[RMDB]
RNA sequence: GGGAACGACUCGAGUAGAGUCGAAAAGUAUAACAGAUACCUUCUGAAGUGGCUCUUGGCUUAUUUUAGACUUAAACCAAUAAUUUAGCAGGCUUACAAAAUCUUUGAUAAAAGAGUCCCUGUCAAAAAUACUAUCCAGUUUCGACUGGAUAGUAUUAAAAGAAACAACAACAACAAC
Reactivity to 2A3 in 0.01 (KOAc 150mM, MgCl2 10mM, bicine 150mM(pH8.5), 24C), signal-to-noise 5, nucleotides 027 to 126: g030u020a110u020a240a100c050a020g140a080u170a120c010c000u090u070c030u070g050a110a050g030u050g060g010c010u020c030u050u040g070g000c030u120u010a100u110u210u080u110a020g020a040c030u110u160a090a080a080c020c010a050a200u200a170a150u120u060u090a030g050c050a010g000g030c020u120u060a060c040a040a150a020a040u040c030u050u100u070g100a140u110a120a090a030a030g040a010g030u010c040c000c000u060g050u070c030a150a050a030
Reactivity to DMS in 0.01 (KOAc 150mM, MgCl2 10mM, bicine 150mM(pH8.5), 24C), signal-to-noise 3, nucleotides 027 to 126: g000u020a030u010a100a180c090a080g010a090u000a130c030c030u030u020c050u000g010a100a080g010u010g020g010c040u030c040u010u000g010g010c040u010u010a030u020u020u010u020a060g000a120c090u010u000a080a070a100c050c060a020a080u010a080a120u020u010u000a030g020c090a040g010g000c090u010u010a090c100a070a060a110a110u000c030u000u000u000g000a080u030a020a060a030a060g000a050g000u000c060c010c020u010g020u020c050a060a060a080